[RMDB]
RNA sequence: GGGAACGACUCGAGUAGAGUCGAAAAGAUCUCUAUACCAGAGUGCAUUACAUACCUAGACAAUGGUUUCCUUUACAUUGGAGCACGUCAUGGAGACUCGCAGUUGGUGCGCUUGAAUUCGGAGGCCCCCAGGAUUAUGCUUCGGCAUAAUCCUGGGAAAAGAAACAACAACAACAAC
Reactivity to 2A3 in 0.01 (KOAc 150mM, MgCl2 10mM, bicine 150mM(pH8.5), 24C), signal-to-noise 4, nucleotides 027 to 126: g070a050u110c020u000c000u020a040u020a220c020c040a000g000a020g010u030g020c000a020u040u090a120c020a060u170a060c000c040u110a070g020a060c080a070a120u130g090g000u050u040u020c010c000u080u050u130a130c120a190u150u190g040g000a050g070c040a010c130g050u000c040a020u100g040g020a060g000a060c010u000c130g040c050a040g030u090u120g000g020u050g000c020g020c000u000u100g080a110a060u120u050c070g080g030a030g050g080c000c000
Reactivity to DMS in 0.01 (KOAc 150mM, MgCl2 10mM, bicine 150mM(pH8.5), 24C), signal-to-noise 1, nucleotides 027 to 126: g020a070u000c000u000c000u020a090u000a170c230c170a060g000a020g000u030g000c010a130u000u010a110c140a050u000a140c020c010u010a300g030a100c080a050a050u030g000g020u030u000u050c020c030u000u080u010a140c050a110u010u000g060g030a080g050c050a050c020g000u000c090a050u010g000g010a110g000a180c070u000c040g030c160a050g000u020u000g010g040u010g010c000g000c010u030u000g000a110a110u000u060c030g000g080a020g040g000c000c010
Structure probing data (2A3 and DMS) for a 177-nucleotide construct. For 2A3 the reverse transcriptase was SuperScript II with manganese. For 2A3, 1,530 sequencing reads were counted.